[RMDB]
RNA sequence: GGGAACGACUCGAGUAGAGUCGAAAAAACUCUUUAAGGCAAUAACGAGCUAAUUCUAAGCAAGUAAUGGAGAAAUGCCAGGGUCACUAUCUAGCCAUAAUAGUGCUUGACAGUAUGAUACUAACUGAAUAUGGUAAACCGUUCGCGGUUUACCAAAGACUCACAUGUUCUUCGGAACAUGUGAGUCAAAAGAAACAACAACAACAAC
Reactivity to 2A3 in 0.01 (KOAc 150mM, MgCl2 10mM, bicine 150mM(pH8.5), 24C), signal-to-noise 1, nucleotides 027 to 156: a000a000c200u200c000u060u150u000a200a170g030g000c020a110a150u040a230a000c000g000a030g110c000u050a050a030u190u110c050u180a040a050g030c040a000a080g020u040a000a260u230g080g050a080g000a110a240a000u020g000c020c020a000g000g000g000u010c000a000c020u020a000u050c030u030a020g000c030c020a020u030a170a100u020a300g050u020g070c020u030u030g000a000c000a020g000u050a140u230g030a000u060a290c080u030a300a000c030u020g020a140a110u060a090u170g000g000u000a000a000a000c000c000g000u000u020c090g000c000g050g000u000u000u000a000c000c000a000a000a000